Overview:
This 207-nucleotide RNA was probed chemically with 2A3 and DMS. Reactivities are given for positions 27 through 156. For DMS, 2,705 sequencing reads were counted. For 2A3, 723 sequencing reads were counted. For 2A3 the reverse transcriptase was SuperScript II with manganese.
RNA sequence: GGGAACGACUCGAGUAGAGUCGAAAAUAGCAGGGCCGAAUCCCUUCUCGAGGUUCGUUUACUUUAAGGUCUGCCUUAAGUAAGUGGUGUUGACGUUUGGGUCCUGCGCAAUGGGAAUUCAUGAACCAUGUCAGGUCCGGAAGGAAGCAGCAUUAAGCCUAAACAUUGGGUUCGCCCAAUGUUUAGGAAAAGAAACAACAACAACAAC
Reactivity to 2A3 in 0.01 (KOAc 150mM, MgCl2 10mM, bicine 150mM(pH8.5), 24C), signal-to-noise 1, nucleotides 027 to 156: u220a000g040c040a000g030g000g000c010c040g050a070a040u040c000c010c000u040u030c080u020c030g110a060g000g060u070u020c010g030u020u030u010a030c020u000u140u180a040a000g030g050u240c180u150g300c010c000u010u030a000a000g000u020a020a000g040u010g050g020u090g040u070u150g170a110c120g000u030u120u070g150g030g000u030c000c000u010g000c000g000c010a000a200u120g020g020g050a030a050u120u060c020a070u130g050a060a040c010c020a010u000g030u050c030a020g010g030u000c040c090g050g030a060a000g020g000a020a000g020c040a000g020c000a010u000u160a090a040g030
Reactivity to DMS in 0.01 (KOAc 150mM, MgCl2 10mM, bicine 150mM(pH8.5), 24C), signal-to-noise 1, nucleotides 027 to 156: u000a150g030c000a030g000g070g020c010c050g040a120a090u000c040c020c020u010u010c000u000c030g030a120g000g000u000u000c020g010u000u000u000a030c040u010u010u010a070a050g030g000u010c120u000g000c000c010u000u000a000a030g000u020a020a050g030u000g020g020u010g020u000u010g050a090c070g010u000u000u050g010g000g020u000c020c020u000g030c050g040c100a060a150u010g020g000g010a120a110u000u000c140a100u020g030a080a130c040c010a130u020g000u000c070a150g030g020u000c010c000g020g000a090a080g000g000a070a050g010c050a060g010c090a140u010u000a090a130g020